An RNA of 207 nucleotides, treated with DMS and 2A3 and read out base by base.
For 2A3, 16,156 sequencing reads were counted.
For 2A3 the reverse transcriptase was SuperScript II with manganese.
Source: RMDB library RNAMAK, as collected in RNAgym.
RNA sequence: GGGAACGACUCGAGUAGAGUCGAAAAGAUAUGGAUCCACAUAAGCUUGGAUUUAUGUGGCGUAGUGGUCGGAAACGACCAUCAAGCCACAUUGUCAGCUUGGGUGGAUCCUAAGUCAAAACCUUAAUCCCUUGGGUUCGCCCAAGGGAUUAAGGAAUCUAUGUAGAGUGUUCGCACUCUACAUAGAAAAAGAAACAACAACAACAAC
Reactivity to DMS in 0.01 (KOAc 150mM, MgCl2 10mM, bicine 150mM(pH8.5), 24C), signal-to-noise 3, nucleotides 027 to 156: g000a120u010a230u000g010g010a010u000c000c000a020c000a050u000a020a020g000c020u000u010g030g020a050u000u000u000a020u010g040u000g000g010c010g000u010a090g020u000g010g040u010c020g010g010a170a130a280c010g010a030c000c000a000u000c010a130a200g010c000c000a010c000a000u000u000g000u000c010a050g020c000u000u000g010g000g120u010g010g010a010u000c010c000u010a010a070g010u000c040a110a070a090a160c000c010u000u000a010a020u000c000c000c000u010u000g010g010g020u000u000c300g030c010c000c000a000a030g000g010g020a000u000u000a000a010g000g010a010a020
Reactivity to 2A3 in 0.01 (KOAc 150mM, MgCl2 10mM, bicine 150mM(pH8.5), 24C), signal-to-noise 7, nucleotides 027 to 156: g020a010u050a030u130g000g000a000u010c000c000a000c010a020u010a010a000g000c020u120u240g150g010a080u270u300u090a010u040g000u000g000g010c010g030u040a000g000u010g000g010u000c010g020g010a130a090a100c010g000a000c000c030a010u030c030a020a000g000c010c000a000c000a000u000u000g000u010c000a000g000c000u000u010g050g010g000u000g010g000a000u000c000c000u000a010a000g010u010c030a030a010a070a140c000c000u000u000a000a000u000c000c000c000u000u000g050g010g010u060u090c280g120c020c000c000a000a000g000g000g000a000u000u000a000a000g000g000a000a000